An RNA of 177 nucleotides, treated with DMS and read out base by base. The DMS profile rests on 5,627 reads. Conditions: 150 mM KOAc, 10 mM MgCl2 and 150 mM bicine (pH 8.5), 24 C. Source: RMDB library TTRINS, as collected in RNAgym. DMS adducts were read by reverse transcription with MarathonRT.
RNA sequence: GGGAACGACUCGAGUAGAGUCGAAAAGAUAUGGAUCCAAAGAGCUUGGAUUUAAGAAAUACAGCGAAUAUAUCGGAAACGAUAUAGGAGCUGUAUUUCUUUGUCAGCUCUACUUGGAUCCUAAGUCCUAAUAUGAGAAGUUCGCUUCUCAUAUUAGAAAAGAAACAACAACAACAAC
Reactivity to DMS in 0.01 (KOAc 150mM, MgCl2 10mM, bicine 150mM(pH8.5), 24C), signal-to-noise 5, nucleotides 027 to 126: g000a110u000a260u000g000g010a000u000c000c000a010a060a050g000a030g030c010u010u010g030g010a020u000u010u010a010a010g000a000a010a000u000a000c000a000g000c010g010a300a240u000a000u000a000u000c010g000g010a170a130a250c010g010a010u000a000u000a000g000g020a300g010c000u000g010u010a000u000u000u000c000u000u000u010g000u000c000a050g010c000u000c000u000a070c300u000u000g000g000a010u000c000c000u000a010a110g000u010c040